[RMDB]
RNA sequence: GGGAACGACUCGAGUAGAGUCGAAAAUGGCUGUCUCACUGUUGCCACUUGUUGGAUCAUCCUUCACCUCCUGCCCACCCUGGGGUCUUUCUCGUAAUAGAGGCAGUAAGCAUGGCCCUGAUGUGACACAACCUUCAGACUUCGGUCUGAAGGUUGUAAAAGAAACAACAACAACAAC
Reactivity to DMS in 0.01 (KOAc 150mM, MgCl2 10mM, bicine 150mM(pH8.5), 24C), signal-to-noise 2, nucleotides 027 to 126: u000g020g000c040u010g000u010c030u000c040a140c140u000g010u020u010g020c050c050a040c140u010u000g010u010u010g010g030a130u000c060a080u010c020c030u000u000c070a130c040c010u000c020c030u000g010c030c000c080a180c070c070c080u000g010g000g040g000u010c030u000u000u010c000u000c000g000u000a110a110u020a110g010a080g010g000c050a050g000u000a060a130g040c090a100u000g000g010c010c000c020u010g000a090u000g000u020g000a190c160